[RMDB]
RNA sequence: GGGAACGACUCGAGUAGAGUCGAAAAUCACCACGCGCGGGGAUAGAUCCUCUGCAGACGACUGAAAUGACCAAGCGGGUCGUGUAAGCGGUCAAGUAGCCUAGUUGUUACGAGUCGCUGAGCGUCAGAUGCUGAUAUUAUUCGUAAUAUCAGCAUCAAAAGAAACAACAACAACAAC
Reactivity to 2A3 in 0.01 (KOAc 150mM, MgCl2 10mM, bicine 150mM(pH8.5), 24C), signal-to-noise 9, nucleotides 027 to 126: u050c010a050c050c000a030c030g050c010g000c020g010g010g020g010a020u090a150g180a120u120c000c010u000c050u080g000c010a030g050a090c030g020a020c020u090g050a050a100a150u110g010a030c020c010a060a030g060c070g050g030g020u020c020g000u010g000u030a060a020g020c010g010g050u100c050a060a060g030u030a010g040c010c030u070a070g030u100u120g030u020u030a010c030g010a050g090u000c000g000c020u020g030a030g020c030g020u030c020a020
Reactivity to DMS in 0.01 (KOAc 150mM, MgCl2 10mM, bicine 150mM(pH8.5), 24C), signal-to-noise 9, nucleotides 027 to 126: u020c060a150c020c020a120c100g020c070g010c040g010g000g000g000a100u020a110g010a150u010c020c010u000c020u030g040c020a080g010a090c050g010a070c060u000g000a080a100a100u010g010a050c040c040a130a120g010c070g010g010g010u000c010g010u000g000u020a130a060g010c030g000g000u010c030a070a190g010u010a040g000c010c020u020a110g010u020u010g010u000u000a020c020g000a170g000u000c010g010c010u010g000a110g010c040g010u010c080a110